[RMDB]
RNA sequence: GGGAACGACUCGAGUAGAGUCGAAAACUCUUGUUCUCGAGGGCCUUCCUUCUGCGGUGAUCCUCCCUCUCCUUGUCGGUGAACCCGCUCUUGUGAGGCCUCUUCAUAGGUCCGGAGUCGACCUCCACUUAGGAUAAUCCUUCGGGAUUAUCCUAAGAAAAGAAACAACAACAACAAC
Reactivity to 2A3 in 0.01 (KOAc 150mM, MgCl2 10mM, bicine 150mM(pH8.5), 24C), signal-to-noise 1, nucleotides 027 to 126: c000u000c020u030u130g030u110u030c010u000c030g030a030g010g040g090c000c000u010u030c010c000u040u080c060u060g040c030g010g020u040g110a110u100c000c020u030c000c050c000u080c000u050c000c030u080u130g080u080c010g000g050u030g020a010a030c020c000c010g020c020u000c000u020u080g030u020g030a090g010g070c060c010u060c000u110u040c020a110u060a080g000g000u030c030c020g040g000a010g000u000c020g060a090c010c010u040c000c000a020
Reactivity to DMS in 0.01 (KOAc 150mM, MgCl2 10mM, bicine 150mM(pH8.5), 24C), signal-to-noise 2, nucleotides 027 to 126: c020u010c020u000u010g030u000u010c000u000c060g020a030g010g010g020c040c060u010u000c070c000u000u000c030u010g010c060g000g020u000g000a120u000c040c010u000c030c000c010u000c020u010c020c050u000u010g010u010c060g010g000u000g000a100a160c240c010c030g010c080u000c060u000u000g050u000g000a120g020g020c040c020u000c060u010u000c120a140u010a040g020g000u010c020c040g000g000a060g010u000c020g010a100c070c010u000c020c050a220